An RNA of 207 nucleotides, treated with DMS and 2A3 and read out base by base. Values cover nucleotides 27 to 156. 2A3 adducts were read by reverse transcription with SuperScript II with manganese. Source: RMDB library RSTRND, as collected in RNAgym.

RNA sequence: GGGAACGACUCGAGUAGAGUCGAAAAUGGCCUUGGUGGCAUGUCGCUUUGAGCAAAGCGUAAAAAGCUCAAAUUAAAAUUAAACGCAAACAACGUUAAAUUCGCUCCUGCUUAUGCUAAAGCUGCGUAAGUUCAGUUGAGCCUGAAUUUUAAGUGAGGAACAGUAUAACUUCGGUUAUACUGUUCCAAAAGAAACAACAACAACAAC
Reactivity to DMS in 0.01 (KOAc 150mM, MgCl2 10mM, bicine 150mM(pH8.5), 24C), signal-to-noise 1, nucleotides 027 to 156: u010g010g010c040c020u000u000g010g010u010g000g010c120a110u000g040u020c010g050c030u010u010u030g020a040g070c000a090a200a100g050c120g050u010a040a060a100a130a110g010c010u000c010a070a030a100u000u000a030a010a050a050u010u000a110a110a040c020g020c050a160a080a170c060a110a030c010g000u000u010a050a050a070u000u010c010g020c000u000c020c040u020g010c010u000u000a000u010g000c010u000a080a060a160g040c260u010g020c040g000u010a010a010g000u000u010c020a010g050u000u010g020a040g040c040c040u020g020a060a020u000u010u000u000a010a060g020u010g040a300
Reactivity to 2A3 in 0.01 (KOAc 150mM, MgCl2 10mM, bicine 150mM(pH8.5), 24C), signal-to-noise 4, nucleotides 027 to 156: u060g030g040c020c020u060u090g210g010u120g060g000c020a010u080g080u060c010g000c000u010u010u040g000a000g000c030a140a170a030g010c000g090u150a060a060a000a000a000g000c010u000c000a020a010a060u040u020a030a010a000a020u080u130a070a050a010c030g000c100a100a060a130c040a110a020c040g010u060u110a030a040a070u020u020c010g000c000u000c000c000u000g010c000u030u020a010u030g000c010u070a140a090a190g090c160u060g000c020g000u000a000a000g000u110u130c020a020g010u070u060g090a000g000c000c000u100g000a030a020u000u010u030u080a120a070g040u030g070a080